[RMDB]
RNA sequence: GGGAACGACUCGAGUAGAGUCGAAAAUCUUGCAAGCCUUCAACAUCGGCUAUACUGUCGAAGCUCGCAGCCUCAACGCUAUGGAAUACACGAGCAUGCAUCGAGGUGCCAGUAUCACACUCUCGGCGCAAGUUCUACCGUUCGCGGUAGAACUUGCAAAAGAAACAACAACAACAAC
Reactivity to 2A3 in 0.01 (KOAc 150mM, MgCl2 10mM, bicine 150mM(pH8.5), 24C), signal-to-noise 1, nucleotides 027 to 126: u030c020u000u000g040c000a000a000g050c010c010u000u160c070a080a080c030a070u150c030g000g010c060u100a120u080a170c080u080g020u060c000g020a030a010g070c000u000c050g000c000a010g160c020c020u070c070a050a040c150g000c050u080a100u150g000g140a170a040u190a150c150a060c070g010a040g080c010a000u040g000c000a020u070c090g010a040g070g000u000g060c010c000a090g070u130a110u120c040a000c010a000c080u150c000u000c030g070g010c040

The record gives the reactivity of an RNA of 177 nucleotides to 2A3. The reactions ran in a buffer of 150 mM KOAc, 10 mM MgCl2 and 150 mM bicine (pH 8.5), at 24 C. For 2A3 the reverse transcriptase was SuperScript II with manganese.